An RNA of 177 nucleotides, treated with DMS and read out base by base. DMS adducts were read by reverse transcription with MarathonRT. Conditions: 150 mM KOAc, 10 mM MgCl2 and 150 mM bicine (pH 8.5), 24 C.

RNA sequence: GGGAACGACUCGAGUAGAGUCGAAAAUUAAAGGUGGUGGUGGAGGAGGUACGGCUCCAGCUGCUCAGCCGACGUACCGCACACACGCCUUUUCGGCAUAGAGCAGCAAUAGGGUAUCCAUAAAAAAGUACCACGUAAACUUCGGUUUACGUGGUACAAAAGAAACAACAACAACAAC
Reactivity to DMS in 0.01 (KOAc 150mM, MgCl2 10mM, bicine 150mM(pH8.5), 24C), signal-to-noise 1, nucleotides 027 to 126: u000u030a090a070a070g000g010u000g020g010u000g000g020u000g000g000a160g020g020a090g000g030u000a090c090g010g010c080u000c030c080a160g000c030u000g030c000u010c000a050g000c010c000g010a050c130g000u000a040c170c080g000c080a100c110a150c060a040c120g000c050c100u000u000u000u000c030g030g000c000a100u000a080g000a000g000c000a000g010c010a100a010u000a040g010g000g000u000a030u000c020c040a060u020a000a060a130a120a140a020